The record gives the reactivity of an RNA of 177 nucleotides to DMS and 2A3.
For 2A3 the reverse transcriptase was SuperScript II with manganese.
Reactivities are given for positions 27 through 126.

[RMDB]
RNA sequence: GGGAACGACUCGAGUAGAGUCGAAAAGUAUUACAUUUAACUCAGCCGGAGAGAAUUUAGCAUAUGGUCAAGUUAGUAGUAUCUAUGCACAUCAAGGAUUAAUGAAUUCUAUUGGUCACAGAAAAAAGAUUAUCGGUAGAUUCGUCUACCGAUAAUCAAAAGAAACAACAACAACAAC
Reactivity to DMS in 0.01 (KOAc 150mM, MgCl2 10mM, bicine 150mM(pH8.5), 24C), signal-to-noise 2, nucleotides 027 to 126: g000u010a070u000u000a090c090a120u020u010u000a100a160c040u000c080a210g000c030c010g020g030a170g000a070g010a130a080u010u010u010a080g000c070a020u000a160u000g040g010u010c080a080a090g000u000u000a100g010u000a050g010u000a030u000c030u000a080u010g010c080a070c100a040u020c050a060a080g010g010a040u000u010a040a110u000g000a080a050u000u000c040u000a140u000u000g010g000u010c050a060c160a100g020a010a070a070a130a100a080
Reactivity to 2A3 in 0.01 (KOAc 150mM, MgCl2 10mM, bicine 150mM(pH8.5), 24C), signal-to-noise 2, nucleotides 027 to 126: g070u070a070u130u150a040c050a110u110u180u130a100a020c020u020c050a010g050c050c000g050g020a030g020a010g070a120a060u050u070u100a070g040c010a060u060a030u130g050g000u040c030a010a040g020u010u090a010g010u030a020g000u030a050u000c020u000a040u060g000c020a020c000a060u060c050a060a080g080g010a040u040u100a110a120u120g070a010a030u070u030c000u030a090u070u100g020g000u050c000a010c060a140g200a090a090a010a040a010a010